This 177-nucleotide RNA was probed chemically with 2A3 and DMS. For 2A3 the reverse transcriptase was SuperScript II with manganese. The DMS profile rests on 12,519 reads. The reactions ran in a buffer of 150 mM KOAc, 10 mM MgCl2 and 150 mM bicine (pH 8.5), at 24 C. For DMS the reverse transcriptase was MarathonRT.

[RMDB]
RNA sequence: GGGAACGACUCGAGUAGAGUCGAAAAGCUGUUUGCUGGGUGCGGAUGGCAAUGGAGCAGGUCACGGUGCGGAUGUCUCGGCUCAGUGUUGCGAGACUGCGGCCGGCGUCGUCGGCUUGGGUGCGGCCCAUCUUGCACUAUUCGUAGUGCAAGAUGGAAAAGAAACAACAACAACAAC
Reactivity to 2A3 in 0.01 (KOAc 150mM, MgCl2 10mM, bicine 150mM(pH8.5), 24C), signal-to-noise 4, nucleotides 027 to 126: g040c030u030g050u150u130u140g040c030u050g050g070g010u150g090c030g050g030a090u060g030g000c000a030a070u120g040g020a030g030c050a010g000g050u060c030a020c070g040g040u170g060c010g030g050a040u090g050u010c010u020c060g080g000c020u010c060a100g050u110g070u200u140g060c030g010a040g030a030c010u020g020c000g030g010c000c010g030g020c020g040u080c030g010u000c040g020g000c050u060u060g040g000g010u070g030c010g010g020c010
Reactivity to DMS in 0.01 (KOAc 150mM, MgCl2 10mM, bicine 150mM(pH8.5), 24C), signal-to-noise 5, nucleotides 027 to 126: g010c030u000g010u000u000u000g010c040u010g010g000g030u010g010c070g000g000a070u000g000g020c050a070a110u010g000g010a110g020c050a060g000g020u000c050a080c090g000g020u000g000c070g010g000a090u000g010u000c030u000c040g010g000c030u000c090a080g020u010g020u000u000g010c060g010a100g000a050c010u010g010c140g000g010c010c010g010g000c080g010u000c070g000u000c050g010g000c030u000u000g010g010g010u000g000c060g000g000c090